[RMDB]
RNA sequence: GGGAACGACUCGAGUAGAGUCGAAAAGUUCCCUCUUAGCGUGGAGGUUUAACUACGCUCGUUCCCCAUAUCGGUGUGGGCGCACCGGAUUUAUAAAUCAAAGUCGUUUAGGGAACGGAAAGGAACAAAAAUCCAUGGGAGUUCGCUCCCAUGGAAAGAUGAAUGAUAAGUUCGCUUAUCAUUCAUCAAAAGAAACAACAACAACAAC
Reactivity to 2A3 in 0.01 (KOAc 150mM, MgCl2 10mM, bicine 150mM(pH8.5), 24C), signal-to-noise 3, nucleotides 027 to 156: g000u010u040c000c000c000u000c010u020u030a000g000c000g000u010g030g030a070g050g080u130u150u110a050a050c010u030a000c010g000c000u000c010g000u000u010c030c000c000c010a030u090a050u140c010g010g000u020g010u070g080g070g000c030g000c040a000c000c000g010g000a010u000u190u050a200u090a080a090a030u100c100a060a020a020g060u060c020g060u070u130u220a070g020g000g030a020a000c030g010g020a090a090a020g050g000a050a020c060a080a120a050a020a040u000c000c000a000u000g000g000g010a020g000u050u060c110g040c050u000c000c000c000a000u000g000g000a000a000a000
Reactivity to DMS in 0.01 (KOAc 150mM, MgCl2 10mM, bicine 150mM(pH8.5), 24C), signal-to-noise 3, nucleotides 027 to 156: g010u000u010c000c000c010u000c040u000u000a020g030c020g060u000g020g010a140g030g010u000u000u000a120a120c020u000a020c020g020c020u010c020g020u000u000c040c000c010c070a160u000a070u010c000g020g000u010g040u000g020g030g020c110g020c010a040c010c010g000g020a110u000u000u000a100u000a100a080a070u000c060a090a100a110g010u010c040g030u010u000u000a060g000g020g000a050a040c030g010g000a030a050a070g000g020a090a130c050a030a080a120a140a210u000c000c000a030u000g000g000g000a050g000u000u010c300g010c010u000c000c000c000a010u010g000g010a000a020a060